An RNA of 177 nucleotides, treated with 2A3 and DMS and read out base by base. For 2A3, 3,294 sequencing reads were counted. The reactions ran in a buffer of 150 mM KOAc, 10 mM MgCl2 and 150 mM bicine (pH 8.5), at 24 C. 2A3 adducts were read by reverse transcription with SuperScript II with manganese. 2A3 is a SHAPE reagent: it acylates the 2'-hydroxyl of flexible nucleotides of all four kinds.
[RMDB]
RNA sequence: GGGAACGACUCGAGUAGAGUCGAAAACGACUGCGUUUCGACGCAGUCGAACAUUAUGUGGAGAAAUAUAAAAGCCGAAAUUCCGAUACCAUAUAAUUUAAAUUACCUACGAGUUCGCUCGUAGGAACCUAAUCAACUUCUUCGGAAGUUGAUUAGGAAAAGAAACAACAACAACAAC
Reactivity to 2A3 in 0.01 (KOAc 150mM, MgCl2 10mM, bicine 150mM(pH8.5), 24C), signal-to-noise 4, nucleotides 027 to 126: c010g000a000c000u000g000c010g010u010u030u080c170g020a030c010g010c000a000g010u000c000g000a000a000c000a020u040u030a020u050g010u010g020g030a130g050a110a180a010u210a010u070a110a210a050a030g060c050c050g070a100a090a070u110u020c030c020g030a030u050a130c000c000a000u030a000u020a060a040u040u120u180a150a190a180u130u080a110c000c000u000a000c000g010a010g010u060u070c180g070c100u000c000g010u000a000g000g000a010a000
Reactivity to DMS in 0.01 (KOAc 150mM, MgCl2 10mM, bicine 150mM(pH8.5), 24C), signal-to-noise 2, nucleotides 027 to 126: c020g020a020c010u010g010c000g020u000u000u040c150g010a030c000g010c000a040g010u000c000g020a040a110c100a110u000u000a020u010g010u000g020g000a230g010a150a120a080u020a160u010a090a050a080a120g020c080c020g000a100a090a130u010u000c030c010g000a110u020a050c010c000a000u000a020u000a020a030u000u020u010a030a070a120u000u010a130c000c000u000a000c000g000a020g020u000u000c220g020c000u010c000g020u000a020g000g000a020a040